[RMDB]
RNA sequence: GGGAACGACUCGAGUAGAGUCGAAAAUGGGAAGUGCUGGAGGCCGGCUUGGUGCAGCGAUCGCGCUUGCUUGAUGCCAUCCUCGCGGACUUGUACGGGCCCCGCAGCAUGCUCACCGAGGGUGUCCCCGAUCAGUGCAGUUCGCUGCACUGAUCGGAAAAGAAACAACAACAACAAC
Reactivity to DMS in 0.01 (KOAc 150mM, MgCl2 10mM, bicine 150mM(pH8.5), 24C), signal-to-noise 1, nucleotides 027 to 126: u010g000g010g010a060a100g020u000g030c050u000g000g020a080g020g000c090c090g010g000c090u010u010g040g040u000g000c010a040g010c050g000a100u010c180g000c080g000c080u000u020g030c130u010u010g010a190u000g020c030c030a080u010c020c020u000c090g010c170g000g010a120c030u000u010g020u010a070c100g040g010g020c020c030c040c060g000c040a070g000c010a010u000g010c070u000c060a030c050c020g000a080g000g030g010u010g000u010c020c040